RNA sequence: GGGAACGACUCGAGUAGAGUCGAAAACAGAUGCUGGAUAAGUCGGGGGAGGCAGAAUCGCUUUGGGAUGACAUUCAGAAAGGCUGGAGUGAUUAUUUGGAAGAGAAAAGCCUCCCUAUUCAUUUCCGCGACGAGAGAUAUUCGUAUCUCUCGUCGCAAAAGAAACAACAACAACAAC
Reactivity to 2A3 in 0.01 (KOAc 150mM, MgCl2 10mM, bicine 150mM(pH8.5), 24C), signal-to-noise 1, nucleotides 027 to 126: c000a030g170a100u100g060c070u090g020g030a040u110a140a070g000u030c060g000g050g000g090g040a000g000g040c000a020g110a050a110u020c000g000c010u000u000u080g170g000g040a030u040g020a000c000a050u000u180c000a050g250a270a080a000g240g000c000u010g120g000a060g030u090g000a230u020u010a040u000u060u040g020g000a040a000g040a050g000a040a020a020a020g000c050c000u010c000c000c000u030a020u010u070c000a000u030u000u040c000c080